[RMDB]
Source: RMDB library OK2TST, as collected in RNAgym.
Chemical mapping of a 177-nucleotide RNA with 2A3 and DMS.
For 2A3 the reverse transcriptase was SuperScript II with manganese.
Values cover nucleotides 27 to 126.
In probing experiments dimethyl sulfate is read out at A N1 and C N3, which are open when not base-paired.
The reactions ran in a buffer of 150 mM KOAc, 10 mM MgCl2 and 150 mM bicine (pH 8.5), at 24 C.
RNA sequence: GGGAACGACUCGAGUAGAGUCGAAAAGGAUGAUUGCCUCACGCUGGUCGUCCGGAAGCUGGUCGAGGGCAGCGCGAAAAUCCUGAAGAUCAAGCGUGCCAUAUUGCGAGGGAUGCACGGCAAGCUACACCGCUCGAUUAUUCGUAAUCGAGCGGUGAAAAGAAACAACAACAACAAC
Reactivity to 2A3 in 0.01 (KOAc 150mM, MgCl2 10mM, bicine 150mM(pH8.5), 24C), signal-to-noise 2, nucleotides 027 to 126: g030g010a070u070g000a040u100u240g030c000c000u000c030a020c020g020c030u050g030g070u060c010g040u010c000c000g000g020a060a010g010c060u100g050g260u070c040g050a080g000g000g120c010a040g060c060g000c040g040a090a020a000a090u000c020c040u080g040a040a020g010a050u050c060a130a000g000c000g010u000g010c000c000a130u180a080u170u150g050c050g000a060g040g060g000a050u120g000c000a010c030g000g000c010a000a020g010c000u050a030
Reactivity to DMS in 0.01 (KOAc 150mM, MgCl2 10mM, bicine 150mM(pH8.5), 24C), signal-to-noise 2, nucleotides 027 to 126: g000g010a040u000g000a070u000u010g010c000c010u000c100a070c060g070c000u000g000g000u010c000g060u010c010c040g030g010a080a110g010c050u000g000g010u000c030g030a150g010g030g000c000a000g010c040g060c070g000a090a070a120a080u010c010c020u000g000a120a120g010a040u000c050a080a100g000c000g000u020g000c050c050a120u000a040u000u000g020c060g000a160g010g000g000a070u000g000c020a100c200g010g000c020a120a080g010c090u000a150